RNA sequence: GGGAACGACUCGAGUAGAGUCGAAAAGCCGACAUACGAGGACUUCGCGAGCUGCACGCUGACGCCGCCGAUGUCGACGCUGCCGCCCACCCACGGCAGCUUCACGAAAUAGUUGAGCAGCACGCCACUAAAUCGGCCUAUUCGUAGGCCGAUUUAGAAAAGAAACAACAACAACAAC
Reactivity to DMS in 0.01 (KOAc 150mM, MgCl2 10mM, bicine 150mM(pH8.5), 24C), signal-to-noise 3, nucleotides 027 to 126: g060c030c000g030a040c080a050u000a080c050g020a220g000g000a080c110u000u000c110g000c030g000a080g040c020u000g000c040a240c020g020c030u020g010a030c150g010c010c010g000c070c040g000a050u000g030u000c030g010a040c100g010c010u000g020c010c000g000c150c020c160a230c030c070c070a300c040g010g000c000a020g020c010u010u000c040a070c140g000a100a070a090u000a060g010u000u010g010a110g050c030a040g000c010a130c070g010c030c070a170
Reactivity to 2A3 in 0.01 (KOAc 150mM, MgCl2 10mM, bicine 150mM(pH8.5), 24C), signal-to-noise 1, nucleotides 027 to 126: g040c000c010g030a040c020a050u260a110c010g000a110g060g000a080c030u080u020c170g010c010g080a010g060c020u080g000c080a000c150g050c000u080g100a050c010g050c080c030g140c040c020g060a050u030g000u040c010g010a020c030g000c010u000g040c030c030g050c010c010c020a110c000c020c000a020c010g000g000c000a000g000c000u000u050c060a060c020g080a060a070a070u210a010g130u110u230g050a030g040c000a000g000c030a010c040g030c000c010a070

The record gives the reactivity of an RNA of 177 nucleotides to DMS and 2A3.
For DMS the reverse transcriptase was MarathonRT.
The RNA was probed in 150 mM KOAc, 10 mM MgCl2 and 150 mM bicine (pH 8.5) at 24 C.
High DMS reactivity at an A or C suggests that its Watson-Crick edge is free.
It was measured as part of the RMDB library OK2TRN.